[RMDB]
RNA sequence: GGGAACGACUCGAGUAGAGUCGAAAAGAAAGAAAGAAAAGACACUGAGUGAGAAUCAAACCAAUCGUAGUGUCGGUAAAGCGUAAUUUAAACAUUGCCAAUUCUCACAGCGAGAAAGACUCGCAAAACGUAUACCCGCUUUCGAGCGGGUAUACGUAAAAGAAACAACAACAACAAC
Reactivity to 2A3 in 0.01 (KOAc 150mM, MgCl2 10mM, bicine 150mM(pH8.5), 24C), signal-to-noise 1, nucleotides 027 to 126: g090a000a140a000g280a060a050a000g080a050a070a000a000g010a000c000a000c060u020g040a020g020u080g000a000g000a000a000u030c060a130a000a000c000c100a000a040u080c090g060u060a070g000u000g000u000c030g030g000u130a010a000a090g050c000g120u110a060a120u000u000u130a140a130a000c090a150u010u010g020c010c010a020a020u030u000c000u000c040a000c110a000g000c000g000a000g060a190a130a000g070a130c000u000c000g000c000a020a020a020
Reactivity to DMS in 0.01 (KOAc 150mM, MgCl2 10mM, bicine 150mM(pH8.5), 24C), signal-to-noise 1, nucleotides 027 to 126: g000a190a110a040g010a190a060a060g000a230a090a060a160g000a080c040a000c020u020g000a060g040u000g000a010g000a030a010u000c230a070a000a020c010c120a040a080u000c060g040u000a020g000u000g000u020c040g000g000u000a020a000a030g000c110g000u000a060a000u000u080u000a190a180a000c280a010u000u040g000c000c050a050a030u010u000c000u000c070a030c030a250g000c030g000a000g000a220a080a030g000a260c000u000c000g000c050a080a010a020
Structure probing data (2A3 and DMS) for a 177-nucleotide construct. DMS adducts were read by reverse transcription with MarathonRT. The RNA was probed in 150 mM KOAc, 10 mM MgCl2 and 150 mM bicine (pH 8.5) at 24 C. It was measured as part of the RMDB library OK1LIB. Reactivities are given for positions 27 through 126. For 2A3 the reverse transcriptase was SuperScript II with manganese. The 2A3 profile rests on 935 reads.